[RMDB]
RNA sequence: GGGAACGACUCGAGUAGAGUCGAAAAACGUCACAGUUAAAUUAUAACUGCAAAUAACGAAAAUUCUUACGCAGUAGCUGCUUAGUCAGGCUGCGUGAUCCAAUGACGGAUUGCUCGUGUCUGUCUGCGGGUCUUACCAUUUAACGAGCUACGUUUAACCACUAUGUACCUUCGGGUACAUAGUGGUAAAAGAAACAACAACAACAAC
Reactivity to 2A3 in 0.01 (KOAc 150mM, MgCl2 10mM, bicine 150mM(pH8.5), 24C), signal-to-noise 2, nucleotides 027 to 156: a000c040g020u060c020a000c000a050g030u040u050a110a210a070u280u210a120u130a210a040c020u000g020c150a030a080a150u140a190a010c030g080a140a070a000a030u150u060c050u060u050a000c000g000c010a040g030u030a210g210c030u010g000c020u070u130a050g100u300c000a000g000g010c000u000g000c000g000u000g000a000u030c000c000a000a030u020g000a010c000g000g000a000u000u090g000c000u000c020g010u000g000u000c000u000g000u010c010u010g030c010g000g010g000u000c000u010u080a030c030c030a130u170u130u100a010a000c000g000a010g020c000u000a020c020g000u000u030u060a040
Structure probing data (2A3) for a 207-nucleotide construct. It was measured as part of the RMDB library ARCHII.